[RMDB]
RNA sequence: GGGAACGACUCGAGUAGAGUCGAAAAUUCUUAAAAUACCGCCAUACUUAAUGAUUGGUAAUUCCUUACUAGUUAAUGAGUUUCAGACUUAAGUAUGAUGUUGUGUUUGCAUAUAGUUCGGGAAACCCAUUCUCCCGAAUUUCGAUUCGGGAGAAUGAAAAGAAACAACAACAACAAC
Reactivity to 2A3 in 0.01 (KOAc 150mM, MgCl2 10mM, bicine 150mM(pH8.5), 24C), signal-to-noise 1, nucleotides 027 to 126: u050u000c020u020u040a110a110a010a010u070a030c000c000g000c000c000a030u000a000c010u030u000a020a020u150g200a130u070u080g090g120u100a010a010u020u090c030c010u030u000a030c060u090a080g140u150u010a020a010u010g060a000g030u000u000u040c030a040g000a010c000u010u010a020a000g000u000a000u030g070a110u230g010u010u090g050u030g010u030u050u030g060c090a040u200a000u040a150g070u050u140c030g000g000g050a000a030a080c010c000
Reactivity to DMS in 0.01 (KOAc 150mM, MgCl2 10mM, bicine 150mM(pH8.5), 24C), signal-to-noise 3, nucleotides 027 to 126: u020u010c060u000u000a070a020a040a030u000a040c040c010g010c120c000a000u000a000c010u010u010a000a000u020g020a150u020u020g000g010u020a010a020u000u010c010c070u010u000a000c010u040a150g000u010u000a030a000u000g020a040g030u000u000u010c000a050g000a180c130u000u030a010a020g020u000a000u010g010a040u020g010u010u020g030u000g000u000u000u010g000c180a080u040a120u030a060g010u010u010c080g010g010g000a090a060a110c110c070
The record gives the reactivity of an RNA of 177 nucleotides to 2A3 and DMS. The RNA was probed in 150 mM KOAc, 10 mM MgCl2 and 150 mM bicine (pH 8.5) at 24 C. For 2A3 the reverse transcriptase was SuperScript II with manganese. It was measured as part of the RMDB libraries RFM100 and RFMREP. High 2A3 reactivity points to a flexible backbone, as in loops and unpaired stretches. Values cover nucleotides 27 to 126.